[RMDB]
RNA sequence: GGGAACGACUCGAGUAGAGUCGAAAAAAGUCGAAUCCAUCCUCUUGAUAUCUCCUUUUGUUUCUGCUAACGAUCUCUUUGAUGAUGGCUGUCAUGUCUGGGAGCCUGUGGCUGAAGAAAAAGGAGGAGAGAGAUGGCAGAAGCUGCUGGUGGCGGAGAUUUACGGUACCUUCGGGUACCGUAAAUCAAAAGAAACAACAACAACAAC
Reactivity to 2A3 in 0.01 (KOAc 150mM, MgCl2 10mM, bicine 150mM(pH8.5), 24C), signal-to-noise 1, nucleotides 027 to 156: a030a000g110u070c030g020a070a020u000c000c000a000u010c030c000u000c000u000u070g120a090u130a230u180c010u030c010c000u000u060u000u050g090u020u140u000c020u050g020c020u050a060a030c040g080a160u030c030u000c000u040u120u100g030a020u050g000a010u070g060g140c150u130g170u300c020a040u130g040u040c040u050g000g000g000a030g020c050c120u150g090u030g000g010c000u010g010a020a010g050a040a040a000a000a000g000g000a000g050g000a000g000a000g000a000g000a000u010g000g000c000a010g020a060a010g010c030u030g000c100u080g000g070u030g020g000c060g030g030a060

About this RNA:
Chemical mapping of a 207-nucleotide RNA with 2A3. The data come from the RNA Mapping Database (RMDB), library OK3TST.